[RMDB]
RNA sequence: GGGAACGACUCGAGUAGAGUCGAAAAUUGGCCUCAGCCUUGACGAGAGGGUACUCAGGGGGGAUGCAAGUGAAUAUCGUCAGAGUGCUCGUGCUGAGACAUCAGUUCCAGGUGAGCCUGGUCAGGGAACUAAACCAGGCUUCGGCCUGGUUUAGUUAAAAGAAACAACAACAACAAC
Reactivity to DMS in 0.01 (KOAc 150mM, MgCl2 10mM, bicine 150mM(pH8.5), 24C), signal-to-noise 2, nucleotides 027 to 126: u030u010g020g000c040c030u000c030a060g010c010c100u010u000g020a090c080g020a210g000a110g010g000g020u000a020c070u000c040a110g010g000g000g000g020g000a090u010g030c170a100a120g030u010g000a100a050u010a060u000c050g000u000c040a030g010a110g020u020g030c020u000c000g020u010g010c010u000g010a040g000a050c050a070u000c090a070g000u000u000c010c020a070g000g000u000g010a060g000c010c000u010g000g000u000c020a070g000g020g010

The record gives the reactivity of an RNA of 177 nucleotides to DMS. DMS adducts were read by reverse transcription with MarathonRT. The DMS profile rests on 2,432 reads. Values cover nucleotides 27 to 126. In probing experiments dimethyl sulfate is read out at A N1 and C N3, which are open when not base-paired. The RNA was probed in 150 mM KOAc, 10 mM MgCl2 and 150 mM bicine (pH 8.5) at 24 C. Source: RMDB library OK2TST, as collected in RNAgym.